[RMDB]
An RNA of 207 nucleotides, treated with 2A3 and read out base by base. For 2A3, 589 sequencing reads were counted. Reactivities are rounded to 0.1 and cut off at 0 and 3. Values cover nucleotides 27 to 156. 2A3 adducts were read by reverse transcription with SuperScript II with manganese.

RNA sequence: GGGAACGACUCGAGUAGAGUCGAAAACUCGCGCCGCGCCAGCGCGGUCAGGUUGCUGGCAAACGCGUCCAUGGUGGUCUGGCCGGCGCGGUCGCCGGACGCGAGCCAGAAUCGCAAUUCGCUGAUGGCGUACAGGCCGGGCGUGGUGGCCUGAAACCUCGUCCUACUGAUUCGUCAGUAGGACGAGAAAAGAAACAACAACAACAAC
Reactivity to 2A3 in 0.01 (KOAc 150mM, MgCl2 10mM, bicine 150mM(pH8.5), 24C), signal-to-noise 1, nucleotides 027 to 156: c020u030c030g020c020g000c000c010g000c080g000c010c000a070g030c010g000c020g000g030u040c010a000g070g010u030u050g120c020u070g040g020c100a120a200a070c120g020c060g010u060c010c020a200u240g050g040u040g000g010u120c070u080g000g010c010c000g020g000c030g100c000g010g000u020c040g000c030c000g000g000a020c000g000c000g000a000g000c010c000a000g030a020a030u100c030g060c090a070a160u250u150c060g000c060u100g070a170u130g080g040c000g020u120a060c040a010g040g000c000c000g050g050g040c010g010u060g040g030u110g040g060c030c000u000g040a130a050a050c000